Chemical mapping of a 177-nucleotide RNA with DMS and 2A3. DMS adducts were read by reverse transcription with MarathonRT. The RNA was probed in 150 mM KOAc, 10 mM MgCl2 and 150 mM bicine (pH 8.5) at 24 C. For DMS, 3,978 sequencing reads were counted. It was measured as part of the RMDB library RFM100. Reactivities are rounded to 0.1 and cut off at 0 and 3. 2A3 adducts were read by reverse transcription with SuperScript II with manganese.
[RMDB]
RNA sequence: GGGAACGACUCGAGUAGAGUCGAAAAUGAGGGUAGUAUCUAGUCGGGAUAAACUACGGCAUCGGAACUAAAAGAGAGUUAACCUUAUACUAAGUAGCUCAUAGAAUAAUCGGUAGAGGCCGGUAGCUAAAUCUUCCCGAUUCGUCGGGAAGAUUUAAAAAGAAACAACAACAACAAC
Reactivity to DMS in 0.01 (KOAc 150mM, MgCl2 10mM, bicine 150mM(pH8.5), 24C), signal-to-noise 3, nucleotides 027 to 126: u020g020a070g000g010g010u000a030g030u000a010u020c030u010a060g020u030c040g000g000g010a060u010a050a100a100c100u100a040c020g000g000c010a050u010c050g030g010a060a060c070u010a040a100a120a080g000a090g010a050g030u000u010a060a070c090c020u010u020a080u030a120c110u030a050a060g020u000a070g000c040u000c030a070u010a090g000a130a090u010a070a060u020c080g010g030u000a170g000a120g000g010c080c010g000g030u040a040g010c160
Reactivity to 2A3 in 0.01 (KOAc 150mM, MgCl2 10mM, bicine 150mM(pH8.5), 24C), signal-to-noise 4, nucleotides 027 to 126: u130g010a030g000g060g010u030a040g020u000a090u070c040u040a060g040u030c030g070g030g010a100u180a100a110a010c010u070a050c000g020g000c010a080u080c030g070g060a030a020c010u070a040a030a150a030g190a020g000a010g040u050u040a110a100c000c010u040u090a060u040a090c090u080a030a080g050u030a010g080c000u010c010a030u020a070g100a060a060u160a190a050u050c040g060g000u050a030g050a060g200g030c000c000g040g010u010a000g020c030